RNA sequence: GGGAACGACUCGAGUAGAGUCGAAAAUCGCGGUCGAACCGCCAGGGUCGCCGAUGUUGACCGUGAUCGCGGGACCGGUCCCGGUGAUGGGCGGGAGAACGGCCUUGCUGAUUGCACCGGCCAGCAGGACGCUUCAAGCUUUCGAGCUUGAAGCGUCAAAAGAAACAACAACAACAAC
Reactivity to DMS in 0.01 (KOAc 150mM, MgCl2 10mM, bicine 150mM(pH8.5), 24C), signal-to-noise 1, nucleotides 027 to 126: u000c050g050c020g000g030u000c000g010a090a200c020c010g020c000c000a060g000g000g000u000c010g010c030c010g000a170u050g000u020u010g000a000c020c000g020u020g000a050u000c060g040c130g000g000g000a240c070c000g000g000u000c000c010c020g000g000u020g010a020u000g000g020g000c000g000g000g020a100g000a090a190c020g000g020c000c000u030u020g000c010u020g020a030u010u000g010c070a130c050c000g000g010c090c020a070g000c080a090g000
Reactivity to 2A3 in 0.01 (KOAc 150mM, MgCl2 10mM, bicine 150mM(pH8.5), 24C), signal-to-noise 4, nucleotides 027 to 126: u050c020g000c020g000g010u010c000g020a060a030c020c000g020c000c030a070g070g060g010u030c000g000c000c000g010a090u110g050u110u160g020a030c000c010g070u140g080a300u040c070g010c160g100g110g020a020c000c030g000g010u020c000c000c020g000g010u050g010a050u050g000g020g000c000g000g030g010a050g010a070a060c000g000g000c010c000u030u150g000c020u130g040a160u040u060g020c030a040c030c010g050g010c020c010a020g010c020a050g060
Structure probing data (DMS and 2A3) for a 177-nucleotide construct.
The DMS profile rests on 2,205 reads.
It was measured as part of the RMDB library OK1LIB.
Conditions: 150 mM KOAc, 10 mM MgCl2 and 150 mM bicine (pH 8.5), 24 C.
For 2A3, 2,959 sequencing reads were counted.